[RMDB]
RNA sequence: GGGAACGACUCGAGUAGAGUCGAAAAUUCUGCGCUACGCGGUUUGCCCCCUGUCGAUCGCACAUAUUGCUUCGACGGGUUCUCCCGCUGCGCCUUCGCCGCUGAGACCGGGAUCGCUCUAUACUCAUCUGAAUAGUAUCUUCGGAUACUAUUCAGAAAAAGAAACAACAACAACAAC
Reactivity to DMS in 0.01 (KOAc 150mM, MgCl2 10mM, bicine 150mM(pH8.5), 24C), signal-to-noise 8, nucleotides 027 to 126: u010u000c050u000g020c030g010c070u010a060c190g020c020g010g010u000u000u000g010c100c110c070c040c020u010g020u000c000g010a010u000c270g010c010a050c300a140u010a130u010u000g010c010u000u000c000g000a010c010g000g000g000u000u000c070u000c090c010c020g020c040u000g000c040g010c030c120u000u000c050g010c020c040g000c040u000g000a120g010a070c080c020g010g000g000a060u000c060g010c040u000c040u000a080u000a100c070u000c090a190
Reactivity to 2A3 in 0.01 (KOAc 150mM, MgCl2 10mM, bicine 150mM(pH8.5), 24C), signal-to-noise 6, nucleotides 027 to 126: u030u000c020u050g000c010g000c060u130a030c130g020c020g050g020u060u110u170g040c010c010c000c000c020u030g000u010c000g020a040u030c120g030c190a030c030a160u300a130u120u240g000c010u010u010c000g010a010c000g010g010g010u020u010c020u010c010c010c010g020c020u040g000c010g020c000c010u070u120c050g030c030c000g020c030u060g040a030g030a180c010c000g040g030g020a080u040c030g000c030u000c010u030a100u040a100c030u040c060a120
Conditions: 150 mM KOAc, 10 mM MgCl2 and 150 mM bicine (pH 8.5), 24 C. An RNA of 177 nucleotides, treated with DMS and 2A3 and read out base by base. DMS adducts were read by reverse transcription with MarathonRT. The 2A3 profile rests on 9,781 reads. 2A3 adducts were read by reverse transcription with SuperScript II with manganese. Values cover nucleotides 27 to 126.